Chemical mapping of a 207-nucleotide RNA with 2A3. Values cover nucleotides 27 to 156.
[RMDB]
RNA sequence: GGGAACGACUCGAGUAGAGUCGAAAAAUUUGUAUGCAAUGAGUUCAUACGAAACGCUUUUUUACAUUUUAUAGUCGUUGCAUUCAAGGGUGCAUGAGAUUGCAUUAAGGGAAACUGUGAUAUGGCUUGGCUUUUGACUGGAAAUACUGAUGGCUCAGCUAUCUUCCUCGUUCGCGAGGAAGAUAGCAAAAGAAACAACAACAACAAC
Reactivity to 2A3 in 0.01 (KOAc 150mM, MgCl2 10mM, bicine 150mM(pH8.5), 24C), signal-to-noise 1, nucleotides 027 to 156: a000u060u090u090g000u020a000u000g030c020a020a130u120g050a060g070u090u160c050a080u130a210c110g010a020a050a020c060g000c070u140u060u070u080u120u200a110c160a070u150u150u040u230a160u100a020g080u050c020g000u010u000g030c030a040u040u130c060a020a000g080g000g000u060g030c010a040u020g020a020g000a140u080u100g020c070a030u020u070a080a000g020g000g020a020a010a010c030u020g010u070g070a050u060a090u160g000g000c140u020u010g000g090c080u160u070u010u050g020a020c060u130g010g050a090a100a000u080a050c040u040g010a030u060g090g000c020u030c030a000
It was measured as part of the RMDB library OK3TST. The 2A3 profile rests on 450 reads. Conditions: 150 mM KOAc, 10 mM MgCl2 and 150 mM bicine (pH 8.5), 24 C.